[RMDB]
RNA sequence: GGGAACGACUCGAGUAGAGUCGAAAAAAGACAAGUGGGUCGGAGUGCAAGUGCAAGGCGUGAAAUGGUUAGCUAAAUCAGUGCACUACAUGAUACCAGAGCUAACGAACAUACUGAACGUUGGAACCUCUAAGGGACAGUUCGCUGUCCCUUAGAGAAAAGAAACAACAACAACAAC
Reactivity to DMS in 0.01 (KOAc 150mM, MgCl2 10mM, bicine 150mM(pH8.5), 24C), signal-to-noise 3, nucleotides 027 to 126: a100a070g000a110c070a080a080g040u000g000g000g000u000c030g060g000a060g000u000g020c070a020a020g020u010g020c060a090a070g010g000c100g000u000g020a130a050a100u000g010g010u000u000a050g000c020u000a050a040a080u000c050a010g020u000g030c140a100c070u020a030c070a050u010g000a060u000a100c080c040a080g010a080g020c020u010a000a010c020g050a110a090c080a100u030a060c140u010g020a120a120c150g000u000u020g000g000a030a060c100
Reactivity to 2A3 in 0.01 (KOAc 150mM, MgCl2 10mM, bicine 150mM(pH8.5), 24C), signal-to-noise 3, nucleotides 027 to 126: a000a000g180a090c080a090a020g050u120g010g000g040u110c040g000g000a020g050u080g040c050a120a000g000u010g010c020a040a040g090g020c110g010u050g010a070a070a100u130g030g060u060u050a060g030c010u020a050a060a050u040c010a020g040u000g080c010a020c090u100a050c030a070u120g050a010u050a270c050c140a040g000a010g080c000u050a010a000c020g080a040a020c050a060u230a120c070u070g050a050a040c080g000u000u000g030g030a020a030c000
The record gives the reactivity of an RNA of 177 nucleotides to DMS and 2A3. The 2A3 profile rests on 1,732 reads. The reactions ran in a buffer of 150 mM KOAc, 10 mM MgCl2 and 150 mM bicine (pH 8.5), at 24 C. Values are in units of 0.01, from 0 to 300, in steps of 10.